[RMDB]
RNA sequence: GGGAACGACUCGAGUAGAGUCGAAAAGGCCGCCGUACCAAAUUGUACGAGGCCGCACACGCAGAUGUUCGUGGGUCCCUGAAUCACUUUAUUCCUGAGCUCGGCCCCAUUAAUGUUACCACCUGUGUAAGUUUUCCUAUUUCGAUAGGAAAACUUAAAAAGAAACAACAACAACAAC
Reactivity to DMS in 0.01 (KOAc 150mM, MgCl2 10mM, bicine 150mM(pH8.5), 24C), signal-to-noise 5, nucleotides 027 to 126: g010g020c000c010g010c230c010g020u000a000c010c200a100a160a190u010u000g010u000a020c000g010a300g000g010c000c010g010c110a060c060a050c040g010c090a100g010a090u010g010u000u000c060g030u000g010g000g000u000c020c010c010u000g000a120a090u010c050a030c040u010u000u010a120u040u000c060c110u000g010a060g020c060u000c070g010g000c070c030c020c020a070u010u010a040a070u000g010u010u000a080c070c050a070c100c070u000g000u000g010
Reactivity to 2A3 in 0.01 (KOAc 150mM, MgCl2 10mM, bicine 150mM(pH8.5), 24C), signal-to-noise 3, nucleotides 027 to 126: g020g020c020c030g070c170c000g000u010a020c010c070a250a240a300u220u170g000u000a000c000g000a010g000g000c020c010g030c010a070c000a000c010g000c030a040g060a260u110g040u170u090c020g000u030g000g010g020u020c000c010c000u040g060a030a090u030c020a020c070u100u170u110a110u190u080c020c030u040g010a010g030c030u020c010g000g000c000c030c000c000a020u050u140a080a070u090g040u070u030a050c030c030a060c040c030u060g000u030g030

Notes
The record gives the reactivity of an RNA of 177 nucleotides to DMS and 2A3. For DMS, 4,532 sequencing reads were counted. The 2A3 profile rests on 2,567 reads. The data come from the RNA Mapping Database (RMDB), library OK2TRN. 2A3 adducts were read by reverse transcription with SuperScript II with manganese. For DMS the reverse transcriptase was MarathonRT.